[RMDB]
RNA sequence: GGGAACGACUCGAGUAGAGUCGAAAACUCAGUGUAGGGAAUAACAUUGAAUUGAUACAAAUACCUUUUUCGGUGUAGGGAAAAACACCGAAUUGAUACAAAUACCUUUCUCAAUGUAGGGAAUAACAAAACAGGCAUCGCUUCGGCGAUGCCUGAACUGGAUGUUAAUGUUCGCAUUAACAUCCAGAAAAGAAACAACAACAACAAC
Reactivity to 2A3 in 0.01 (KOAc 150mM, MgCl2 10mM, bicine 150mM(pH8.5), 24C), signal-to-noise 3, nucleotides 027 to 156: c010u000c010a010g010u040g040u090a060g010g020g080a090a140u140a080a060c050a020u030u050g040a100a090u150u110g080a110u190a220c090a030a130a050u160a090c000c000u000u050u000u020u020c000g000g000u000g000u010a020g000g030g070a080a140a050a020a000c000a010c000c010g000a000a000u010u030g000a000u020a020c020a010a070a010u090a070c000c000u010u080u010c010u010c030a040a080u090g020u060a030g010g010g050a030a060u090a140a030c090a030a040a020a030c000a000g000g010c000a000u000c020g010c040u070u080c170g030g010c010g000a000u000g030c000c000u000g000a000a000
Reactivity to DMS in 0.01 (KOAc 150mM, MgCl2 10mM, bicine 150mM(pH8.5), 24C), signal-to-noise 1, nucleotides 027 to 156: c020u000c020a070g050u000g060u000a040g020g040g020a100a130u020a120a070c000a010u000u010g000a050a050u010u000g040a000u000a030c030a020a110a090u010a020c010c010u000u000u000u000u000c000g040g000u000g020u020a200g000g030g000a080a050a160a170a060c010a010c010c000g020a010a000u010u000g000a080u000a010c000a020a130a080u010a030c010c010u000u010u000c110u010c030a000a040u000g000u020a080g140g010g000a120a060u010a040a090c130a040a050a080a160c030a030g030g020c000a010u000c010g060c020u010u010c300g010g050c000g070a010u000g000c020c070u000g000a000a040
This 207-nucleotide RNA was probed chemically with 2A3 and DMS. Source: RMDB library M2RFPK, as collected in RNAgym. For 2A3, 2,104 sequencing reads were counted. For DMS, 2,551 sequencing reads were counted.